[RMDB]
RNA sequence: GGGAACGACUCGAGUAGAGUCGAAAAGAAGACGUGACGAAAAGUCACGAAAAAGAGCUAGCAAUUCUCCGCUAGCAAAGAUCGAAAGAUCAAAGGAGAAAAAGACCUGGGAGACCAGGUCAAAAGACGGUGAUUAUUACUUCGGUAAUAAUCACCGAAAAGAAACAACAACAACAAC
Reactivity to 2A3 in 0.01 (KOAc 150mM, MgCl2 10mM, bicine 150mM(pH8.5), 24C), signal-to-noise 3, nucleotides 027 to 126: g130a060a020g100a030c010g010u000g010a000c010g050a060a110a160a040g000u020c000a000c020g050a040a020a000a010a000g130a020g020c000u000a000g000c020a090a250u030u000c000u000c010c000g000c000u010a010g000c020a000a120a000g010a010u010c000g020a100a070a010g010a000u000c030a030a010a030g020g000a010g020a010a100a000a020a000g010a000c000c000u000g000g000g000a100g030a030c000c000a000g000g000u010c010a000a000a000a010g030a010
Reactivity to DMS in 0.01 (KOAc 150mM, MgCl2 10mM, bicine 150mM(pH8.5), 24C), signal-to-noise 1, nucleotides 027 to 126: g010a030a200g010a100c000g100u050g020a030c020g000a110a040a100a150g030u030c000a000c000g000a000a110a000a150a050g040a140g020c000u000a000g000c030a000a180u030u000c000u010c000c000g000c050u000a010g000c000a150a000a090g000a000u000c000g010a060a180a110g030a000u000c000a070a040a270g020g010a110g000a000a030a260a050a130g000a000c000c000u040g010g020g000a180g000a150c000c010a020g020g000u000c030a000a000a020a030g000a110

The record gives the reactivity of an RNA of 177 nucleotides to 2A3 and DMS. For 2A3 the reverse transcriptase was SuperScript II with manganese. The DMS profile rests on 1,749 reads. DMS adducts were read by reverse transcription with MarathonRT. Conditions: 150 mM KOAc, 10 mM MgCl2 and 150 mM bicine (pH 8.5), 24 C. The data come from the RNA Mapping Database (RMDB), library OK1LIB.